[RMDB]
RNA sequence: GGGAACGACUCGAGUAGAGUCGAAAAGAUAUGGAUGUGGACAUGCUCAGGAUCGGAAACGAUCUGGGAGCAACAGCCAUUGUCCUAAGUCAAAACACAGCUGACAGCUUCGGCUGUCAGCUGUGAACUUCCAAUUAUCGUUCGCGAUAAUUGGAAGAAAAGAAACAACAACAACAAC
Reactivity to 2A3 in 0.01 (KOAc 150mM, MgCl2 10mM, bicine 150mM(pH8.5), 24C), signal-to-noise 3, nucleotides 027 to 126: g010a010u080a030u140g010g000a000u030g060u020g120g080a060c090a230u100g000c020u000c010a020g020g000a000u010c000g040g010a090a050a060c030g020a010u000c020u010g090g240g030a000g010c010a000a010c030a010g070c000c000a010u070u230g010u000c000c010u050a140a040g120u090c070a020a040a130a080c000a010c000a010g000c010u010g020a000c000a010g020c020u110u260c300g180g000c000u010g000u010c000a000g000c020u000g000u010g000a000a000
Reactivity to DMS in 0.01 (KOAc 150mM, MgCl2 10mM, bicine 150mM(pH8.5), 24C), signal-to-noise 4, nucleotides 027 to 126: g010a030u000a170u000g000g010a010u000g010u010g010g020a110c150a210u000g000c000u010c000a300g000g000a000u000c000g010g000a050a100a190c000g020a000u000c000u000g000g020g000a010g010c000a030a040c140a080g000c000c000a010u000u000g020u010c000c000u000a040a170g020u000c130a060a070a160a200c000a000c000a000g040c000u010g000a030c000a010g000c000u000u000c240g020g000c000u000g000u000c000a000g020c000u000g000u000g010a020a090